[RMDB]
RNA sequence: GGGAACGACUCGAGUAGAGUCGAAAAGCUAGAAGGUUCGCCUUCUAGCAAAGAAAGCGGAAAACACCGAAAUAAAACGGAGAGGGCCGCAACCACCCAUAAAAAGGAUCAACUUCGGUUGAUCCAAGUUCUAGUAGUAGUUCGCUACUACUAGAACAAAAGAAACAACAACAACAAC
Reactivity to 2A3 in 0.01 (KOAc 150mM, MgCl2 10mM, bicine 150mM(pH8.5), 24C), signal-to-noise 5, nucleotides 027 to 126: g010c000u000a000g000a010a010g000g030u060u120c130g060c000c000u000u000c000u000a000g000c000a000a000a000g000a000a020a010g010c000g000g020a050a130a090a030c060a110c020c020g060a080a150a040u200a050a120a020a010c020g000g020a060g020a060g040g040g020c030c000g000c010a000a010c010c020a030c010c000c020a020u160a050a120a010a010a010g000g000a000u010c000a000a010c010u050u130c300g110g000u000u000g000a000u010c000c000a000a000
Reactivity to DMS in 0.01 (KOAc 150mM, MgCl2 10mM, bicine 150mM(pH8.5), 24C), signal-to-noise 3, nucleotides 027 to 126: g000c000u000a000g020a020a000g010g000u000u020c200g010c000c000u000u000c000u000a010g000c000a010a060a090g010a070a140a120g030c000g000g000a030a090a040a040c060a090c000c020g000a100a110a140u010a110a060a190a140c010g000g000a040g000a150g010g010g010c000c000g040c000a070a180c130c060a140c020c010c000a130u030a020a040a090a070a070g000g000a010u000c000a000a010c000u000u010c150g040g000u000u000g000a000u000c000c000a010a010